[RMDB]
An RNA of 177 nucleotides, treated with DMS and 2A3 and read out base by base.
Source: RMDB library OK2TRN, as collected in RNAgym.
The reactions ran in a buffer of 150 mM KOAc, 10 mM MgCl2 and 150 mM bicine (pH 8.5), at 24 C.
RNA sequence: GGGAACGACUCGAGUAGAGUCGAAAAGCACGGAGACAUGCACGGAAACGUGGACGGAGGCUCCAUGCCGAACGUGGCUGUCCGAGGCCUCCGUAUUUGACUGGUAAUUCAGUCGUUAGGACAGCUAACGGAUAUCACGAUUCGUCGUGAUAUCCGUAAAAGAAACAACAACAACAAC
Reactivity to DMS in 0.01 (KOAc 150mM, MgCl2 10mM, bicine 150mM(pH8.5), 24C), signal-to-noise 3, nucleotides 027 to 126: g020c070a050c040g010g000a100g010a100c100a100u010g010c030a030c010g020g000a080a090a170c040g040u000g010g000a040c010g010g000a040g010g010c000u000c010c020a060u010g000c050c060g000a110a110c130g020u010g000g000c000u000g010u000c000c000g020a070g010g010c000c000u010c000c000g010u000a000u010u010u000g010a010c010u000g000g000u010a140a150u010u010c020a020g010u000c000g020u000u000a130g000g000a030c020a030g010c010u000a120
Reactivity to 2A3 in 0.01 (KOAc 150mM, MgCl2 10mM, bicine 150mM(pH8.5), 24C), signal-to-noise 2, nucleotides 027 to 126: g020c010a000c020g050g040a030g010a040c080a060u190g050c030a000c040g050g040a030a040a010c010g000u010g010g000a000c020g020g000a010g000g000c010u000c030c020a010u060g050c030c010g100a100a030c050g080u110g000g030c000u010g020u000c000c000g010a040g000g040c010c000u000c000c000g020u030a120u050u050u090g010a000c010u000g030g030u110a100a060u170u120c020a000g000u000c000g020u040u070a000g010g000a000c010a000g000c000u010a050